RNA sequence: GGGAACGACUCGAGUAGAGUCGAAAAAUGGAGUAUAUUAUUGAGCCAUUAAAGGAAUGAAGUACUGGUACAUGGUGCAGCUUAGAUGAACCUUGGAAACAUUGUGCUAAAUGAAAGAAGCUGGUUACAAGAGUCAACACGUAUGAUUUCAUUCAUGACUCCACGCCUGAUUCGUCAGGCGUGGAGUAAAAGAAACAACAACAACAAC
Reactivity to 2A3 in 0.01 (KOAc 150mM, MgCl2 10mM, bicine 150mM(pH8.5), 24C), signal-to-noise 1, nucleotides 027 to 156: a000u070g000g000a060g000u090a110u030a040u300u020a020u000u060g020a030g020c010c000a010u000u100a050a020a000g120g000a000a070u040g040a030a000g020u130a070c090u030g030g030u020a000c010a030u070g000g000u050g040c000a020g000c010u020u030a020g030a070u080g050a000a020c000c000u010u030g020g000a010a010a010c010a010u110u140g020u030g110c020u120a130a100a050u190g030a000a050a120g010a000a000g000c010u000g040g000u070u020a060c050a070a050g020a010g220u030c000a050a050c080a040c110g100u210a040u020g100a120u010u050u110c030a060u020u030c020a010u050g000